[RMDB]
RNA sequence: GGGAACGACUCGAGUAGAGUCGAAAAUCACUCAUUAUUUCAAGGAGGAAUUAGGUUAUGUCAGUACAAUUAGAAGUUAAAGAAAGAGCUAUCCGUCCACGUUCACUAAGAAAUCAGCUACGUCACGAAAUGAGCCCAAUUUCGAUUGGGCUCAUUUAAAAGAAACAACAACAACAAC
Reactivity to 2A3 in 0.01 (KOAc 150mM, MgCl2 10mM, bicine 150mM(pH8.5), 24C), signal-to-noise 2, nucleotides 027 to 126: u070c000a050c010u040c000a020u030u210a100u080u070u190c070a090a050g010g060a060g000g050a070a030u060u020a060g050g000u120u080a070u140g050u020c030a010g010u030a060c030a020a120u130u080a070g080a300a020g060u040u180a040a060a000g030a040a100a020g020a000g000c010u040a060u030c000c020g030u010c000c000a010c070g000u000u010c020a000c040u040a040a010g000a030a030a000u140c000a000g030c030u060a000c130g050u070c010a000c130g130
Reactivity to DMS in 0.01 (KOAc 150mM, MgCl2 10mM, bicine 150mM(pH8.5), 24C), signal-to-noise 3, nucleotides 027 to 126: u020c090a070c050u000c050a040u030u020a080u010u010u030c100a050a100g020g020a080g020g010a040a070u020u020a100g010g000u010u010a030u000g020u000c010a050g000u000a080c100a110a070u020u030a050g000a050a090g010u010u020a050a070a140g020a040a090a080g000a060g040c020u000a050u010c010c040g020u000c030c020a050c030g000u010u000c010a100c050u060a030a100g000a060a060a050u020c090a050g000c050u010a030c120g000u000c050a070c120g000

An RNA of 177 nucleotides, treated with 2A3 and DMS and read out base by base. Conditions: 150 mM KOAc, 10 mM MgCl2 and 150 mM bicine (pH 8.5), 24 C. The data come from the RNA Mapping Database (RMDB), libraries RFM100 and RFMREP. For 2A3, 1,024 sequencing reads were counted. For DMS the reverse transcriptase was MarathonRT. For 2A3 the reverse transcriptase was SuperScript II with manganese.